[RMDB]
RNA sequence: GGGAACGACUCGAGUAGAGUCGAAAAGAUAUGGAUAACUAAGUGAUGACCCACGUAACAUCUCGGAAACGAGUGGUGGCAAGCUUUCUUAUCCUAAGUCAAAGCUAAUAGCUUCGGCUAUUAGCAAGUGAUAGAACAUCUUCGGAUGUUCUAUCACAAAAGAAACAACAACAACAAC
Reactivity to DMS in 0.01 (KOAc 150mM, MgCl2 10mM, bicine 150mM(pH8.5), 24C), signal-to-noise 5, nucleotides 027 to 126: g000a020u000a180u010g000g000a020u000a000a020c030u000a010a010g030u000g010a090u010g010a160c300c000c000a010c020g010u010a100a100c150a050u010c010u000c000g000g000a050a030a100c010g010a010g010u000g010g010u000g000g000c020a040a050g010c000u000u000u000c050u000u000a000u000c000c000u010a030a100g000u000c010a080a090a170g000c000u000a010a010u000a000g010c010u000u010c250g020g000c000u000a000u000u000a010g010c010a030a010
Reactivity to 2A3 in 0.01 (KOAc 150mM, MgCl2 10mM, bicine 150mM(pH8.5), 24C), signal-to-noise 3, nucleotides 027 to 126: g010a000u020a030u070g000g000a000u010a000a000c030u020a030a000g050u040g200a300u100g020a080c000c020c010a000c010g030u040a090a060c040a300u190c030u000c020g020g030a050a050a030c010g010a030g020u090g100g010u020g020g000c070a170a110g020c020u020u020u000c000u000u020a010u030c010c010u030a080a020g020u000c060a150a080a000g000c000u000a000a000u000a000g000c010u040u060c300g130g000c000u010a010u010u000a000g000c010a000a010
Conditions: 150 mM KOAc, 10 mM MgCl2 and 150 mM bicine (pH 8.5), 24 C. This 177-nucleotide RNA was probed chemically with DMS and 2A3. The DMS profile rests on 4,310 reads. 2A3 adducts were read by reverse transcription with SuperScript II with manganese. The data come from the RNA Mapping Database (RMDB), library TTRDEL.